[RMDB]
RNA sequence: GGGAACGACUCGAGUAGAGUCGAAAACUAUCUUGGGGAUAAUAACAUCAAGUAUAGACCUGCUAAAACAGAUAAAUACGCAGCGGAUAAUCGUAUUGCAAGUGAUUUUGCUAAGUAUAUUACGGUACGUAAGUUGCAAGUUCGCUUGCAACUUACGAAAAGAAACAACAACAACAAC
Reactivity to 2A3 in 0.01 (KOAc 150mM, MgCl2 10mM, bicine 150mM(pH8.5), 24C), signal-to-noise 2, nucleotides 027 to 126: c010u000a020u030c010u050u040g060g000g000g040a080u070a250a070u100a200a110c000a110u090c010a020a050g050u060a040u020a040g060a100c000c000u000g040c040u090a010a210a060a000c030a000g130a240u060a050a140a000u060a050c060g000c020a030g040c040g080g030a050u130a100a060u100c010g000u030a030u080u200g000c040a050a050g030u050g180a090u200u000u020u000g000c030u030a120a000g020u020a060u020a000u130u150a080c040g020g040u070a020
Reactivity to DMS in 0.01 (KOAc 150mM, MgCl2 10mM, bicine 150mM(pH8.5), 24C), signal-to-noise 2, nucleotides 027 to 126: c020u000a040u000c030u010u020g000g020g000g020a170u030a080a110u040a090a130c030a040u010c000a000a030g000u000a060u000a020g010a170c010c000u000g020c110u030a100a050a050a130c120a100g000a140u000a080a070a040u010a060c110g020c170a040g000c030g000g000a110u010a050a100u010c060g010u000a080u000u000g010c120a040a070g020u020g000a110u000u010u000u000g010c000u000a070a180g000u000a110u000a070u010u000a030c080g020g000u030a060